An RNA of 177 nucleotides, treated with 2A3 and DMS and read out base by base. In probing experiments dimethyl sulfate is read out at A N1 and C N3, which are open when not base-paired. Conditions: 150 mM KOAc, 10 mM MgCl2 and 150 mM bicine (pH 8.5), 24 C. Values cover nucleotides 27 to 126.

RNA sequence: GGGAACGACUCGAGUAGAGUCGAAAAGAUAUGGAUCCUGCUGCGGGAGCUGGGUGAUCGGAAACGAUCACAUAGCGACGAUCGCAGAACUACAGGAUCCUAAGUCAAACUUGACCUUCGGGUCAAGGUGAUUAACGUACUUCGGUACGUUAAUCACAAAAGAAACAACAACAACAAC
Reactivity to 2A3 in 0.01 (KOAc 150mM, MgCl2 10mM, bicine 150mM(pH8.5), 24C), signal-to-noise 5, nucleotides 027 to 126: g020a010u060a030u130g010g000a010u010c010c010u010g060c000u010g000c010g030g010g010a020g020c000u030g030g050g000u010g000a000u000c010g000g030a060a040a020c010g000a000u000c000a000c000a010u010a000g000c000g300a300c030g010a040u020c000g000c010a000g040a080a070c130u300a070c040a030g000g000a000u000c000c000u000a020a000g010u010c030a040a060a120c000u000u010g010a010c010c000u040u080c300g190g010g000u000c010a000a000g080
Reactivity to DMS in 0.01 (KOAc 150mM, MgCl2 10mM, bicine 150mM(pH8.5), 24C), signal-to-noise 5, nucleotides 027 to 126: g010a030u000a300u000g010g000a000u000c000c000u000g010c010u000g000c000g000g000g010a080g030c000u000g010g000g040u000g010a020u000c000g010g000a100a090a180c010g010a000u030c000a010c000a050u000a010g000c000g000a060c300g010a070u010c020g010c010a020g000a080a060c140u020a300c040a020g000g000a010u000c000c000u000a010a050g010u000c010a140a120a300c010u000u000g000a000c000c000u010u000c230g020g010g010u000c000a000a000g000